[RMDB]
RNA sequence: GGGAACGACUCGAGUAGAGUCGAAAACAAAGGUCUCCUGGGCUGGUUCUAAAAUCAUUGCUGUUAUCUACAGCGGCAGGGAGUCUCUAAUAUUCCCAUCGGGAACCUAUUACUGUGUCACCACUAAGCCUUUUGAAUAGUUCGCUAUUCAAAAGGCAAAAGAAACAACAACAACAAC
Reactivity to 2A3 in 0.01 (KOAc 150mM, MgCl2 10mM, bicine 150mM(pH8.5), 24C), signal-to-noise 1, nucleotides 027 to 126: c020a000a100a010g000g000u020c010u000c040c010u040g000g240g000c030u020g060g050u050u110c080u170a080a100a040a100u120c050a040u010u290g000c010u000g000u060u080a050u160c040u040a020c000a000g000c010g020g020c000a040g000g000g000a000g040u000c030u000c000u050a050a110u050a060u090u050c010c000c000a010u080c060g010g010g000a030a050c020c010u060a090u130u050a100c080u100g000u030g020u040c040a040c080c010a000c030u020a090a000
Reactivity to DMS in 0.01 (KOAc 150mM, MgCl2 10mM, bicine 150mM(pH8.5), 24C), signal-to-noise 1, nucleotides 027 to 126: c090a080a190a080g000g000u000c020u000c000c020u000g000g020g060c080u000g000g020u020u000c130u000a090a040a070a070u000c050a070u000u000g000c000u030g010u000u010a100u020c170u000a020c040a010g040c010g000g020c040a300g010g000g000a030g030u000c010u020c030u020a120a110u000a130u000u000c000c000c000a200u000c110g000g010g010a080a050c040c020u000a080u000u000a100c150u020g010u000g000u000c090a130c050c050a040c100u000a040a150